[RMDB]
RNA sequence: GGGAACGACUCGAGUAGAGUCGAAAAGGGACGCCUAUAGAAGAAGAGGCUAGGUGGUAUUCCGGUGUGGGAUACUUGGUAAUAUGUAACGCUAAUUGCAUAAGAUUGUAGGACGGAAUUUACAGUCAAAACGGUCCUGCGUUCGCGCAGGACCGAAUCUAGAACGAAACUUCGGUUUCGUUCUAGAAAAAGAAACAACAACAACAAC
Reactivity to 2A3 in 0.01 (KOAc 150mM, MgCl2 10mM, bicine 150mM(pH8.5), 24C), signal-to-noise 1, nucleotides 027 to 156: g050g020g000a040c040g010c000c000u000a000u090a270g110a150a000g020a050a000g000a020g070g000c080u070a010g050g020u040g000g020u050a010u020u010c040c040g040g100u240g010u130g050g030g010a000u030a050c010u000u150g020g000u040a010a010u020a110u040g040u050a100a000c020g010c130u080a220a000u120u110g020c010a020u000a130a040g050a090u030u030g000u010a000g010g030a010c090g070g050a060a030u130u040u000a010c030a030g020u000c010a040a030a040a040c000g000g000u000c000c030u000g000c000g030u000u050c300g000c010g000c060a000g000g000a000c000c000g000a000a000